[RMDB]
RNA sequence: GGGAACGACUCGAGUAGAGUCGAAAAGCUGUCGAAAACUGAUUGAUUAUGAAGGCAUAUUUGCCGGAGGUUCAACAGGCUCGAUUAUUGCAGCGAUUGAGCAGUUGAUAACGUCAAUUGAAGAAGGGACGCAAACGCUGUUCGCAGCGUUUGCGUCAAAAGAAACAACAACAACAAC
Reactivity to 2A3 in 0.01 (KOAc 150mM, MgCl2 10mM, bicine 150mM(pH8.5), 24C), signal-to-noise 1, nucleotides 027 to 126: g030c010u030g120u190c000g090a100a000a000a220c000u010g030a030u030u010g000a000u000u130a170u300g140a120a070g020g000c000a000u120a190u300u300u300g000c000c000g040g000a000g000g000u030u000c000a000a000c000a030g000g190c000u000c000g050a010u000u040a040u050u090g000c000a000g070c000g010a000u000u010g000a000g000c000a000g050u020u030g050a080u030a050a090c000g130u040c000a000a000u000u090g050a030a080g000a040a050g210g070
Chemical mapping of a 177-nucleotide RNA with 2A3. For 2A3, 321 sequencing reads were counted. Conditions: 150 mM KOAc, 10 mM MgCl2 and 150 mM bicine (pH 8.5), 24 C. It was measured as part of the RMDB library OK1LIB.